[RMDB]
RNA sequence: GGGAACGACUCGAGUAGAGUCGAAAAGUACUACCGUUCGCGGUAGUACAAAUAAUCCAGCCUGGAAUGGCUGGAGCCAAAACUAUGGUAAAGGCACCAUAGAAAGAGCAGAGUUCGCUCUGCUCAAGUAGUGAUUAUAGUUCGCUAUAAUCACUACAAAAGAAACAACAACAACAAC
Reactivity to 2A3 in 0.01 (KOAc 150mM, MgCl2 10mM, bicine 150mM(pH8.5), 24C), signal-to-noise 8, nucleotides 027 to 126: g000u000a000c000u000a000c010c010g020u030u060c260g000c010g110g000u000a000g000u000a000c000a000a000a000u050a000a010u000c000c000a000g000c010c000u060g030g130a110a050u100g020g000c000u000g000g000a000g020c000c000a020a050a050a100c010u010a010u020g010g010u100a110a220a280g230g040c070a010c010c000a000u000a010g090a080a150a010g000a010g000c000a000g000a000g020u060u110c160g050c070u000c000u000g000c000u000c000a000a010
Reactivity to DMS in 0.01 (KOAc 150mM, MgCl2 10mM, bicine 150mM(pH8.5), 24C), signal-to-noise 7, nucleotides 027 to 126: g010u000a000c000u000a000c000c000g020u000u010c230g030c010g010g010u000a000g010u000a000c000a020a050a050u010a150a110u000c000c000a010g000c000c000u000g000g050a190a050u000g000g010c000u000g000g010a010g000c040c050a070a060a090a150c010u000a000u000g000g000u010a060a130a110g010g010c130a080c000c000a000u000a010g000a090a090a110g010a010g010c000a010g000a020g010u000u010c230g020c000u000c000u000g000c000u000c010a030a070